[RMDB]
Notes:
Chemical mapping of a 207-nucleotide RNA with 2A3 and DMS. The RNA was probed in 150 mM KOAc, 10 mM MgCl2 and 150 mM bicine (pH 8.5) at 24 C. For 2A3, 2,401 sequencing reads were counted.

RNA sequence: GGGAACGACUCGAGUAGAGUCGAAAACACAACAGAGACUUGUUACACCUUCGUUUGUCAAAGGCAUUCAAUGUGUGAAUAAUGUUGUAGGACCCCGCCAUGGAGACAACAACUUGCAUGAGAAGCUUGUUGCUGCCUACAAGAAUGUGCUUGUAGAGCACAACAUAACCUUCGGGUUAUGUUGUGCAAAAGAAACAACAACAACAAC
Reactivity to 2A3 in 0.01 (KOAc 150mM, MgCl2 10mM, bicine 150mM(pH8.5), 24C), signal-to-noise 4, nucleotides 027 to 156: c040a010c010a000a040c020a010g110a020g070a120c080u150u170g050u060u050a010c000a010c000c000u000u060c090g020u040u030u030g050u050c080a160a110a180g050g000c010a000u000u050c040a050a060u020g020u000g000u010g040a010a000u140a050a050u070g010u030u000g010u030a100g010g060a120c030c000c000c020g000c060c010a050u050g080g000a060g030a060c020a050a000c010a030a050c130u010u090g020c020a020u060g030a050g030a300a020g010c050u000u020g000u010u010g000c020u020g010c000c010u000a020c010a000a010g030a110a100u190g020u100g140c000u000u010g000u020a010g000a010
Reactivity to DMS in 0.01 (KOAc 150mM, MgCl2 10mM, bicine 150mM(pH8.5), 24C), signal-to-noise 1, nucleotides 027 to 156: c090a060c030a070a040c030a070g020a260g000a100c090u010u010g020u000u020a030c030a050c000c090u000u000c110g000u000u010u030g050u010c090a070a060a080g040g030c000a050u010u010c000a050a050u010g090u010g030u000g010a150a090u000a070a050u000g000u000u020g020u000a130g000g000a150c070c010c040c060g040c090c080a110u000g000g020a080g030a040c010a030a020c040a030a040c050u010u000g000c020a070u010g000a180g010a110a160g000c080u000u000g000u000u000g060c020u000g000c000c010u000a040c010a010a020g010a180a160u000g000u000g000c020u000u020g050u000a020g010a300
It was measured as part of the RMDB library OK3TST.